[RMDB]
Source: RMDB library OK2TRN, as collected in RNAgym. Structure probing data (2A3) for a 177-nucleotide construct. 2A3 adducts were read by reverse transcription with SuperScript II with manganese. Conditions: 150 mM KOAc, 10 mM MgCl2 and 150 mM bicine (pH 8.5), 24 C.
RNA sequence: GGGAACGACUCGAGUAGAGUCGAAAACUCACACGACACACUGAAAGGUGCGUCAUACUUGAUGCCCCCGGCCUACUGCGCGAGGUGGGCAUUUCAGAUGCUAUUGUAAACAACUUUUUCCUUUCGGGGGACGGAUAAAGUUCGCUUUAUCCGUCCCAAAAGAAACAACAACAACAAC
Reactivity to 2A3 in 0.01 (KOAc 150mM, MgCl2 10mM, bicine 150mM(pH8.5), 24C), signal-to-noise 1, nucleotides 027 to 126: c010u000c000a020c000a010c020g090a050c010a010c000a000c060u130g060a010a030a060g070g010u000g020c000g020u030c000a000u060a040c060u070u120g030a010u000g020c020c010c030c060c000g020g030c050c040u190a110c060u190g030c060g000c020g090a100g000g130u280g000g000g000c020a000u010u010u040c020a030g010a030u020g000c010u160a100u170u300g010u090a040a020a020c040a020a060c020u000u000u060u170u040c000c000u070u040u090c010g080g000